[RMDB]
RNA sequence: GGGAACGACUCGAGUAGAGUCGAAAAUGGCACCUCCCGGUACUACUCAAGGACGACCAACCCGAGGAGGCGCACGCGUACGCCUGGGUCCUAACGAUCGCGACGGGCGAGGAGCACACGAUCCGCGCGUUUAUGCAACUUUCGAGUUGCAUAAACGAAAAGAAACAACAACAACAAC
Reactivity to DMS in 0.01 (KOAc 150mM, MgCl2 10mM, bicine 150mM(pH8.5), 24C), signal-to-noise 5, nucleotides 027 to 126: u000g010g010c010a080c020c020u000c010c000c010g010g000u000a080c040u000a010c050u010c030a160a110g010g030a130c110g000a130c060c040a200a110c090c020c010g010a150g030g000a040g010g000c040g010c030a040c100g010c070g010u000a070c050g000c000c030u000g000g020g010u000c030c020u010a110a120c100g010a060u000c050g010c030g010a100c060g000g000g020c030g000a060g010g010a090g020c030a060c080a080c110g000a090u000c010c020g030c110g010
Reactivity to 2A3 in 0.01 (KOAc 150mM, MgCl2 10mM, bicine 150mM(pH8.5), 24C), signal-to-noise 3, nucleotides 027 to 126: u060g050g000c020a010c000c000u000c000c010c000g000g000u050a080c020u000a000c010u010c070a090a080g150g030a100c100g110a140c060c000a040a060c000c000c000g040a150g000g020a000g010g000c010g010c000a040c020g050c020g020u070a030c020g010c000c020u050g060g000g000u020c000c010u070a120a050c060g040a060u080c050g000c050g180a100c030g000g040g000c010g020a050g010g050a020g040c050a030c000a000c090g050a050u020c020c020g030c020g000

An RNA of 177 nucleotides, treated with DMS and 2A3 and read out base by base. The data come from the RNA Mapping Database (RMDB), library OK2TST. Conditions: 150 mM KOAc, 10 mM MgCl2 and 150 mM bicine (pH 8.5), 24 C.